Chemical mapping of a 177-nucleotide RNA with DMS and 2A3.
[RMDB]
RNA sequence: GGGAACGACUCGAGUAGAGUCGAAAAAAAAAGAUCGAAAGAUCAAACGGUAGAAAAGAUGGUUUGAAAACCACGCCUUCUACCAAUAUAGUAAAUAAAUAGGCGUAAGUUCGAAAGUACAAAAAAAGAUUACACAUAAGUUCGCUUAUGUGUAAUCAAAAGAAACAACAACAACAAC
Reactivity to DMS in 0.01 (KOAc 150mM, MgCl2 10mM, bicine 150mM(pH8.5), 24C), signal-to-noise 2, nucleotides 027 to 126: a000a070a030a160a050g030a030u000c010g010a160a070a100g000a010u000c000a100a040a060c180g000g020u000a000g010a020a000a000a010g030a130u000g020g000u000u000u020g020a080a070a090a030c000c000a010c010g010c020c010u000u000c000u030a000c000c010a070a050u010a030u000a110g000u000a080a050a060u010a040a010a090u020a030g000g000c000g010u000a040a100g020u000u000c020g000a140a030a060g010u010a030c050a030a010a050a020a080a030a080
Reactivity to 2A3 in 0.01 (KOAc 150mM, MgCl2 10mM, bicine 150mM(pH8.5), 24C), signal-to-noise 1, nucleotides 027 to 126: a000a110a000a000a000g000a000u010c000g020a020a040a000g000a000u000c000a020a040a010c060g000g000u000a010g020a020a010a000a000g060a170u020g000g090u080u070u200g160a230a210a000a000c010c000a000c000g000c000c000u000u000c000u000a000c000c000a000a000u010a000u000a010g070u030a000a060a140u140a060a080a060u170a050g000g000c000g050u050a070a060g060u040u040c040g080a110a070a020g050u060a080c060a010a140a000a030a010a000a060

2A3 adducts were read by reverse transcription with SuperScript II with manganese.